[RMDB]
RNA sequence: GGGAACGACUCGAGUAGAGUCGAAAAACGCCUAGUUACGACUAGGCGAUCGGAGGACAGCAGACUCAGGUCGAAAUCGGGACCUGAGUCUGCGCUCCUCUCCAGCACGAGGACUACGGUCCUCGAAUGGGAAAUGCCAUUUCGAUGGCAUUUCCCAAAAAGAAACAACAACAACAAC
Reactivity to 2A3 in 0.01 (KOAc 150mM, MgCl2 10mM, bicine 150mM(pH8.5), 24C), signal-to-noise 1, nucleotides 027 to 126: a000c000g000c000c000u000a000g000u000u030a050c230g020a020c160u000a000g000g000c000g010a050u070c040g040g000a010g010g010a000c000a040g000c000a010g000a000c000u000c030a030g000g050u080c060g090a150a080a180u300c130g070g140g050a000c040c000u000g000a000g000u000c000u000g000c000g000c000u000c000c000u000c000u000c000c000a070g000c050a000c000g000a000g000g030a020c060u090a000c240g070g000u000c000c000u000c000g000a000a120
Chemical mapping of a 177-nucleotide RNA with 2A3. Source: RMDB library RFM100, as collected in RNAgym. Reactivities are rounded to 0.1 and cut off at 0 and 3. The reactions ran in a buffer of 150 mM KOAc, 10 mM MgCl2 and 150 mM bicine (pH 8.5), at 24 C.